[RMDB]
RNA sequence: GGGAACGACUCGAGUAGAGUCGAAAAUUUCAUUGGCGAGUGUGUGCGUGCGUGUGCUGUGGCAGCGGCUUUUUUGGCUGCGCUCGGCGUGUGUGCUGUGUGUGCUUGCUGGUGCCCUGUGCUGCGGCACAAUUCACAGGUUCGCCUGUGAAUUGUGAAAAGAAACAACAACAACAAC
Reactivity to DMS in 0.01 (KOAc 150mM, MgCl2 10mM, bicine 150mM(pH8.5), 24C), signal-to-noise 3, nucleotides 027 to 126: u010u020u030c020a050u010u010g010g000c010g020a030g010u010g000u000g010u000g010c060g010u000g010c050g020u000g010u000g010c010u000g010u020g000g010c010a090g050c070g010g010c010u000u000u020u010u020u020g000g000c000u000g020c010g010c010u000c020g000g010c010g020u000g010u000g010u010g000c010u020g050u010g000u000g020u000g010c030u000u000g010c020u000g010g020u000g000c030c010c030u010g010u000g020c020u010g000c050g000g000
Reactivity to 2A3 in 0.01 (KOAc 150mM, MgCl2 10mM, bicine 150mM(pH8.5), 24C), signal-to-noise 7, nucleotides 027 to 126: u070u090u070c020a020u010u040g010g000c010g010a020g010u050g000u010g000u010g020c010g000u020g010c020g020u060g030u020g010c010u020g030u190g120g000c050a100g010c050g020g000c000u100u090u030u020u180u300g030g000c000u000g000c010g000c010u000c000g010g000c020g000u030g000u010g000u020g000c090u030g030u000g010u010g010u010g020c000u010u020g000c010u010g010g010u030g020c010c000c000u040g040u060g030c050u040g030c050g050g010